[RMDB]
The record gives the reactivity of an RNA of 177 nucleotides to DMS. For DMS the reverse transcriptase was MarathonRT. The reactions ran in a buffer of 150 mM KOAc, 10 mM MgCl2 and 150 mM bicine (pH 8.5), at 24 C. For DMS, 3,119 sequencing reads were counted.
RNA sequence: GGGAACGACUCGAGUAGAGUCGAAAAUCAUGAGCCCCCCAUCUCGCUGUAGCUUUGCCUUCUGACUUGGCUUUCCCCCACCCAGCAAGGGUUCUGAGCAGAAAGCCCUCCGUGUGAGAACCGCAGGCUAAGAGUAACCGUUCGCGGUUACUCUUAGAAAAGAAACAACAACAACAAC
Reactivity to DMS in 0.01 (KOAc 150mM, MgCl2 10mM, bicine 150mM(pH8.5), 24C), signal-to-noise 3, nucleotides 027 to 126: u000c080a100u000g020a130g010c010c010c010c010c020c010a120u000c030u010c060g030c050u000g010u010a070g010c070u000u020u000g020c030c010u000u000c040u010g000a080c050u000u020g010g010c110u000u010u000c020c020c000c020c040a150c030c010c000a090g010c150a110a110g010g010g010u000u000c040u000g010a100g000c060a040g010a040a060a080g000c030c020c020u010c050c040g030u000g000u010g010a060g010a060a070c060c020g010c090a070g000g010